Chemical mapping of a 177-nucleotide RNA with 2A3 and DMS. DMS adducts were read by reverse transcription with MarathonRT. The reactions ran in a buffer of 150 mM KOAc, 10 mM MgCl2 and 150 mM bicine (pH 8.5), at 24 C.
RNA sequence: GGGAACGACUCGAGUAGAGUCGAAAAAGCCAUUCUUUCCCUUUUUGCUUCCAAACUCCUCAACUGGGAACCUUCAUAUGUGCAGUAUUUAUAUUGGAUCAUACUGGUGAUUAUAAAAGUUCCUAGGCAUGUUAAUAGUCUUCGGACUAUUAACAUGAAAAGAAACAACAACAACAAC
Reactivity to 2A3 in 0.01 (KOAc 150mM, MgCl2 10mM, bicine 150mM(pH8.5), 24C), signal-to-noise 5, nucleotides 027 to 126: a000g030c000c020a050u050u020c030u040u040u060c000c000c000u000u010u000u040u080g020c000u060u000c020c010a090a100a090c030u040c020c000u070c030a060a050c020u000g010g000g000a000a010c000c000u040u060c030a030u040a030u120g130u120g070c000a000g010u020a020u020u160u030a210u030a110u160u190g090g030a030u100c010a010u030a030c010u030g130g050u140g100a060u060u150a030u030a050a060a010a010g010u010u010c000c010u010a010g010g040
Reactivity to DMS in 0.01 (KOAc 150mM, MgCl2 10mM, bicine 150mM(pH8.5), 24C), signal-to-noise 4, nucleotides 027 to 126: a090g010c040c050a090u000u000c060u000u000u000c010c000c010u000u000u000u000u000g010c060u000u000c030c040a060a130a140c090u010c020c030u000c110a100a150c020u000g000g000g000a030a020c020c030u000u000c080a030u000a020u000g020u000g020c010a030g000u000a010u000u000u010a090u000a230u030u010g010g010a130u000c210a030u000a010c020u000g020g020u010g000a110u000u010a040u000a030a030a040a050g000u000u000c000c000u000a030g000g000